This 207-nucleotide RNA was probed chemically with DMS and 2A3. It was measured as part of the RMDB library OK3TST. The 2A3 profile rests on 1,454 reads. DMS (dimethyl sulfate) methylates the pairing face of unpaired adenines and cytosines.

RNA sequence: GGGAACGACUCGAGUAGAGUCGAAAAGCCCUGGUGGCACAGGUCUGUAAUCCCAACUGCUAGGGUGACUGUGGCAGGAGAAUCACAUGAAACCGGGAGGUGGAGGUUGCAGUGAGCUGAGAUGGCGUCAUUGCACUCCAGCAUGGGCGACAGAGCACUUGCAAUGUGUUUUCGAACACAUUGCAAGAAAAGAAACAACAACAACAAC
Reactivity to DMS in 0.01 (KOAc 150mM, MgCl2 10mM, bicine 150mM(pH8.5), 24C), signal-to-noise 1, nucleotides 027 to 156: g040c030c000c010u010g020g010u000g000g020c020a120c010a020g000g000u000c050u000g010u000a070a100u000c000c010c000a160a080c060u010g010c020u000a300g020g010g010u010g010a110c070u010g010u030g020g000c030a120g000g020a130g000a100a070u000c060a050c070a130u000g020a090a070a080c020c020g030g020g010a210g030g000u020g030g010a060g010g060u000u000g010c000a070g030u000g000a140g000c000u010g040a150g010a110u010g020g000c000g000u010c010a040u000u010g040c000a110c010u010c000c000a030g000c020a090u010g030g010g000c000g040a170c030a050g010a060g060c070a200
Reactivity to 2A3 in 0.01 (KOAc 150mM, MgCl2 10mM, bicine 150mM(pH8.5), 24C), signal-to-noise 3, nucleotides 027 to 156: g010c000c000c000u030g020g030u040g040g000c040a000c030a070g000g030u000c010u080g090u120a020a080u040c040c020c010a050a040c110u060g040c050u030a030g010g050g020u020g090a120c060u050g020u140g110g000c010a010g050g040a040g050a040a040u140c060a030c050a110u090g030a070a030a030c040c020g030g010g020a030g020g080u030g030g010a030g010g090u160u130g000c000a010g000u010g010a010g000c010u050g070a050g040a300u290g120g010c010g140u100c020a020u020u040g000c000a010c030u030c000c010a000g020c010a040u040g020g000g030c040g000a030c020a050g060a000g050c030a030